[RMDB]
Description:
The record gives the reactivity of an RNA of 177 nucleotides to DMS and 2A3. 2A3 adducts were read by reverse transcription with SuperScript II with manganese. DMS adducts were read by reverse transcription with MarathonRT. The RNA was probed in 150 mM KOAc, 10 mM MgCl2 and 150 mM bicine (pH 8.5) at 24 C. It was measured as part of the RMDB library OK1LIB.
RNA sequence: GGGAACGACUCGAGUAGAGUCGAAAAUUUGAUCCUGGCUCAGGACGAACGCUGGCGGAGUGCUUAACCCAUGCAUGUCGAGCCGUAAGGCCAUUCAGGGUACACGAGCGGCGGACGGGUGAGUAACAAUAUUUUAUAAUUUCGAUUAUAAAGUAUUAAAAGAAACAACAACAACAAC
Reactivity to DMS in 0.01 (KOAc 150mM, MgCl2 10mM, bicine 150mM(pH8.5), 24C), signal-to-noise 9, nucleotides 027 to 126: u020u030u030g000a110u010c000c000u010g010g010c030u010c010a050g010g020a200c010g000a060a150c030g000c010u000g010g030c010g000g030a260g000u000g000c220u010u020a070a050c010c000c000a090u010g010c130a040u000g010u040c200g010a170g010c000c010g000u050a070a130g010g020c010c010a010u010u010c040a060g000g000g000u000a120c030a020c020g000a300g010c010g010g010c010g000g000a130c010g000g000g010u000g000a030g010u000a070a090c050
Reactivity to 2A3 in 0.01 (KOAc 150mM, MgCl2 10mM, bicine 150mM(pH8.5), 24C), signal-to-noise 6, nucleotides 027 to 126: u070u030u130g030a020u020c000c000u000g020g000c000u000c000a000g080g160a030c000g000a030a000c010g010c000u030g240g000c010g030g190a070g010u010g000c040u050u060a020a010c000c000c010a110u020g010c010a000u010g020u090c100g090a030g000c000c000g000u030a040a050g000g000c000c000a000u010u010c010a000g000g000g000u010a010c000a000c000g020a020g010c010g010g000c000g000g010a010c000g000g040g050u030g000a010g000u030a050a010c010